Source: RMDB libraries RFM100 and RFMREP, as collected in RNAgym. Structure probing data (DMS and 2A3) for a 177-nucleotide construct. High DMS reactivity at an A or C suggests that its Watson-Crick edge is free. For 2A3 the reverse transcriptase was SuperScript II with manganese. Reactivities are rounded to 0.1 and cut off at 0 and 3.
[RMDB]
RNA sequence: GGGAACGACUCGAGUAGAGUCGAAAAUACGUCCGACAAGACGACCAAAACACCCCGUGUCUCGCUGUGCCUUCGGGUGCCGAGCACUCCCUCCCUCCGCCGGGUCUGAAAGAACGAUUUUCGGCUGGCAUUCCAAUAACUUCGGUUAUUGGAAUGCAAAAGAAACAACAACAACAAC
Reactivity to DMS in 0.01 (KOAc 150mM, MgCl2 10mM, bicine 150mM(pH8.5), 24C), signal-to-noise 3, nucleotides 027 to 126: u000a140c060g010u010c010c020g010a220c300a110a110g000a020c050g000a180c080c030a040a060a080a090c180a160c050c000c040c090g010u000g020u010c020u000c070g000c100u020g010u000g020c000c010u030u010c120g050g020g030u000g000c020c040g020a020g000c090a030c010u010c000c000c030u020c000c010c010u000c000c020g000c010c030g030g000g000u000c000u010g010a070a210a080g010a130a150c070g000a060u000u000u000u010c010g020g010c020u000g010
Reactivity to 2A3 in 0.01 (KOAc 150mM, MgCl2 10mM, bicine 150mM(pH8.5), 24C), signal-to-noise 5, nucleotides 027 to 126: u200a020c010g010u010c020c030g060a080c040a040a030g010a010c020g050a070c010c070a040a050a060a020c110a110c010c000c000c010g020u010g030u010c010u000c020g060c080u070g020u030g020c000c000u050u060c110g110g000g000u010g010c020c010g000a010g000c000a010c020u040c010c000c000u030c010c000c000u030c010c000g000c010c010g000g020g000u000c020u030g050a050a050a030g060a080a030c090g020a040u040u010u100u130c000g000g000c010u030g020